The record gives the reactivity of an RNA of 177 nucleotides to DMS and 2A3. The 2A3 profile rests on 8,020 reads. DMS adducts were read by reverse transcription with MarathonRT. For DMS, 3,876 sequencing reads were counted. The reactions ran in a buffer of 150 mM KOAc, 10 mM MgCl2 and 150 mM bicine (pH 8.5), at 24 C. Source: RMDB library TTRDEL, as collected in RNAgym. Values are in units of 0.01, from 0 to 300, in steps of 10.
[RMDB]
RNA sequence: GGGAACGACUCGAGUAGAGUCGAAAAGAUAUGGAGCGUUAAGUGGAACUACGACCGUCCUCGGAAACGAGGACGUGUCGCCUCAAACGCUCCUAAGUCAAAACCCUGCGACUUCGGUCGCAGGGAACAUACAGAGAGACUUCGGUCUCUCUGUAUGAAAAGAAACAACAACAACAAC
Reactivity to DMS in 0.01 (KOAc 150mM, MgCl2 10mM, bicine 150mM(pH8.5), 24C), signal-to-noise 4, nucleotides 027 to 126: g010a040u000a220u020g000g010a010g030c000g010u000u010a080a150g020u000g000g010a190a140c170u020a300c010g010a010c010c010g010u000c000c020u000c000g020g000a040a040a080c000g010a020g010g000a010c000g000u010g000u000c010g000c020c010u000c050a130a090a010c010g020c000u000c000c000u000a010a040g000u010c000a090a090a140a130c000c000c000u000g000c000g010a000c000u000u010c200g010g010u000c020g020c000a010g000g000g000a000a010
Reactivity to 2A3 in 0.01 (KOAc 150mM, MgCl2 10mM, bicine 150mM(pH8.5), 24C), signal-to-noise 3, nucleotides 027 to 126: g000a010u030a000u090g000g020a000g000c030g020u040u060a300a300g060u240g030g100a290a300c200u260a080c300g000a000c010c000g000u010c000c000u000c000g000g010a020a020a010c000g000a010g000g000a000c010g000u030g000u000c000g010c000c000u040c020a070a030a000c000g000c000u000c000c000u000a000a000g000u000c010a030a030a090a240c000c000c010u000g000c000g010a010c020u050u150c300g130g000u010c000g000c010a000g000g010g000a000a000